[RMDB]
The record gives the reactivity of an RNA of 177 nucleotides to 2A3 and DMS. The DMS profile rests on 1,244 reads. Values cover nucleotides 27 to 126.

RNA sequence: GGGAACGACUCGAGUAGAGUCGAAAAGAAGGAGAUGAAAGCGACUUUAGAAUCGGCUAACUGAGCAGCCAGAUGCAGACGGCAAGUAUCGUCGCCAGAGAUACAGUCGCAAAUAGCCGAAGGAGAACCUGAGCGUGGUAUUCGUACCACGCUCAGGAAAAGAAACAACAACAACAAC
Reactivity to 2A3 in 0.01 (KOAc 150mM, MgCl2 10mM, bicine 150mM(pH8.5), 24C), signal-to-noise 2, nucleotides 027 to 126: g100a050a050g000g000a140g000a090u060g050a090a080a050g000c060g000a020c020u120u150u170a150g000a140a040u060c060g000g000c000u000a020a110c140u220g000a000g000c010a000g100c160c020a010g010a030u070g000c020a030g040a000c030g000g000c020a000a010g070u090a020u100c120g000u000c010g000c050c000a000g000a000g000a020u060a000c060a010g000u070c000g000c050a060a060a060u080a000g010c040c050g010a070a000g060g090a110g000a000a000
Reactivity to DMS in 0.01 (KOAc 150mM, MgCl2 10mM, bicine 150mM(pH8.5), 24C), signal-to-noise 1, nucleotides 027 to 126: g030a060a100g050g000a170g000a080u030g010a010a080a160g000c020g000a080c020u000u000u010a090g000a210a130u020c000g050g000c000u000a000a040c120u000g000a170g000c040a070g000c020c040a050g020a130u050g010c000a070g000a190c030g040g000c000a160a060g000u000a020u000c010g040u020c110g030c020c010a060g000a010g020a000u000a000c080a190g020u000c010g000c020a020a020a040u000a060g040c000c020g000a070a030g000g000a110g020a240a080

The reactions ran in a buffer of 150 mM KOAc, 10 mM MgCl2 and 150 mM bicine (pH 8.5), at 24 C.